[RMDB]
Conditions: 150 mM KOAc, 10 mM MgCl2 and 150 mM bicine (pH 8.5), 24 C. Structure probing data (2A3) for a 177-nucleotide construct. Values cover nucleotides 27 to 126. Source: RMDB library OK1LIB, as collected in RNAgym. The 2A3 profile rests on 746 reads. For 2A3 the reverse transcriptase was SuperScript II with manganese.

RNA sequence: GGGAACGACUCGAGUAGAGUCGAAAACAGGCGGCUCACGGAUCGCAUCCGCGCCCAGGGCCCCGUGAUGCCCCCUGGCGGCCUGGAUGCCGGGGGGCAGAUGUACGUGAAUCGCAACGAGAUAUUCCAGAUGCGAAACGUUCGCGUUUCGCAUCUGAAAAGAAACAACAACAACAAC
Reactivity to 2A3 in 0.01 (KOAc 150mM, MgCl2 10mM, bicine 150mM(pH8.5), 24C), signal-to-noise 2, nucleotides 027 to 126: c020a000g070g080c040g000g030c050u000c060a010c040g010g120a160u150c070g010c100a070u060c080c120g010c040g030c020c030c020a040g020g010g030c050c010c010c010g030u040g000a040u110g000c010c000c000c000c010u000g010g000c000g050g100c020c050u100g020g020a070u090g020c000c000g000g000g000g030g000g010c000a000g000a000u000g070u050a020c060g000u020g070a020a020u200c050g030c030a020a010c020g040a070g030a200u030a080u090u080c030